[RMDB]
RNA sequence: GGGAACGACUCGAGUAGAGUCGAAAAAGUAUAGCCAUCAGCACUUAAAGUAGGCCGCCGGGGACACUCACCUUAGCCCGCGCGCUCCGAAUUUUAUGUAGUGUUGAUGUCGCACGCUUUAGAGGGGACUGGGGACCCUAUUCGUAGGGUCCCCAGUAAAAGAAACAACAACAACAAC
Reactivity to 2A3 in 0.01 (KOAc 150mM, MgCl2 10mM, bicine 150mM(pH8.5), 24C), signal-to-noise 3, nucleotides 027 to 126: a020g070u100a100u140a090g000c000c000a000u000c000a000g020c000a000c010u010u110a000a050a160g020u000a010g000g000c020c000g020c000c000g000g000g000g000a050c040a090c100u060c020a270c050c030u160u190a100g060c020c000c000g060c030g000c020g000c050u060c000c000g020a080a030u220u220u210u140a070u130g050u040a000g000u000g000u000u000g020a020u020g000u020c020g010c020a020c090g010c000u050u030u050a040g020a040g060g000g000g000
Reactivity to DMS in 0.01 (KOAc 150mM, MgCl2 10mM, bicine 150mM(pH8.5), 24C), signal-to-noise 2, nucleotides 027 to 126: a060g040u010a220u060a120g040c050c000a050u000c010a020g000c000a020c000u000u020a020a130a080g010u000a110g000g000c300c070g000c000c030g040g010g000g000a140c000a260c150u030c060a020c080c080u000u030a170g000c000c050c000g000c230g000c020g030c020u020c000c000g000a050a020u000u070u000u000a000u010g000u000a020g040u000g020u000u020g000a000u010g010u020c050g000c030a300c200g000c000u000u000u000a080g020a170g020g000g010g000